[RMDB]
RNA sequence: GGGAACGACUCGAGUAGAGUCGAAAAGAUAUGGAUAAUCUAGGUUCGCGAAGAACUCGGAAACGAGGGAGCGAUCUAGAGUUAUCCUAAGUCAAAACCAUCGACGGAGUUCGCUCCGUCGAUGGAACAGCUGGUUAUAGUUCGCUAUAACCAGCUGAAAAGAAACAACAACAACAAC
Reactivity to DMS in 0.01 (KOAc 150mM, MgCl2 10mM, bicine 150mM(pH8.5), 24C), signal-to-noise 2, nucleotides 027 to 126: g000a010u000a300u000g010g010a030u000a000a030u000c000u000a000g000g030u000u000c020g030c000g030a080a150g010a100a210c000u010c000g000g000a160a080a190c000g020a020g010g000g000a110g040c000g000a010u000c000u000a000g000a050g000u010u010a000u000c000c000u000a000a150g000u010c030a100a090a110a190c000c030a020u010c000g010a010c000g020g020a000g000u000u030c300g010c000u000c000c010g010u000c000g010a000u000g000g010a050a040
Reactivity to 2A3 in 0.01 (KOAc 150mM, MgCl2 10mM, bicine 150mM(pH8.5), 24C), signal-to-noise 2, nucleotides 027 to 126: g010a010u060a040u160g000g000a020u010a010a020u050c000u010a010g010g190u230u300c030g030c030g150a300a050g000a040a060c010u010c000g000g030a000a080a040c030g000a010g000g040g010a030g000c010g000a000u040c000u000a000g020a000g060u030u030a000u000c010c010u010a110a020g050u050c040a000a020a080a140c000c000a010u020c030g000a010c010g020g010a010g050u140u150c220g120c200u000c010c000g030u000c010g000a010u010g000g010a010a010
Description
This 177-nucleotide RNA was probed chemically with DMS and 2A3. Reactivities are given for positions 27 through 126. DMS adducts were read by reverse transcription with MarathonRT.